[RMDB]
RNA sequence: GGGAACGACUCGAGUAGAGUCGAAAAACGACAAUAUUGAUCAACGACGACGACGCUUCCAUCACAGUGUGGGCACUUAAUUCGGUCUGCUGUGGUGAGAUCCCGUUCAGGUGUUUGUAAUCGACUCACUAACCAGGGAACAAGCACGAAUCCAACACGGGGUCGCAGUAUUCGUACUGCGACCCCGAAAAGAAACAACAACAACAAC
Reactivity to 2A3 in 0.01 (KOAc 150mM, MgCl2 10mM, bicine 150mM(pH8.5), 24C), signal-to-noise 1, nucleotides 027 to 156: a040c140g110a060c090a210a140u090a100u220u080g070a110u120c030a050a070c040g090a010c020g010a030c010g000a000c000g090c130u030u030c000c030a010u020c000a000c010a010g020u050g010u290g160g070g050c030a140c130u120u280a090a130u290u000c130g110g000u000c000u000g050c000u000g000u000g000g010u010g060a060g000a010u020c000c000c000g030u050u000c030a130g000g000u010g020u050u070u150g030u030a080a070u050c000g020a000c000u040c040a020c030u030a000a120c020c050a050g000g030g000a030a050c060a040a000g000c000a030c120g070a090a040u000c080c050a030a050c030a000